[RMDB]
Source: RMDB library OK2TST, as collected in RNAgym. This 177-nucleotide RNA was probed chemically with 2A3 and DMS. For DMS the reverse transcriptase was MarathonRT. The RNA was probed in 150 mM KOAc, 10 mM MgCl2 and 150 mM bicine (pH 8.5) at 24 C.
RNA sequence: GGGAACGACUCGAGUAGAGUCGAAAACACCUGAAUUAUUAAGCGGCGAAAAGAUCGCCACUUAUCCAGGUACAACACUCACAGUAACAAGAGAUGGAGAUAGUUUGGUGUACUUCAUAGGGAGCACCUGAAUGGAGCAAUUCGUUGCUCCAUUCAGAAAAGAAACAACAACAACAAC
Reactivity to 2A3 in 0.01 (KOAc 150mM, MgCl2 10mM, bicine 150mM(pH8.5), 24C), signal-to-noise 2, nucleotides 027 to 126: c010a000c000c000u000g050a150a080u100u050a060u070u090a210a000g000c000g000g000c020g050a030a000a090a130g170a120u000c010g000c010c000a010c000u010u000a020u070c040c000a020g000g030u010a020c040a000a040c020a070c000u080c000a110c000a110g090u190a220a040c070a110a050g030a010g000a090u050g040g000a060g000a060u110a090g060u030u040u120g000g010u040g000u050a080c020u050u060c020a070u070a140g110g000g020a030g040c000a030c070
Reactivity to DMS in 0.01 (KOAc 150mM, MgCl2 10mM, bicine 150mM(pH8.5), 24C), signal-to-noise 3, nucleotides 027 to 126: c110a050c020c000u010g020a080a050u010u010a130u010u000a000a020g070c040g020g000c010g000a010a100a180a100g010a110u000c000g000c000c000a020c000u000u000a040u010c110c010a030g000g010u000a100c120a050a080c120a060c070u000c060a100c150a150g010u010a060a080c130a070a050g010a070g020a070u010g010g000a090g000a070u000a050g020u000u010u000g010g010u010g010u000a080c040u000u000c050a100u000a110g000g010g010a100g000c080a020c040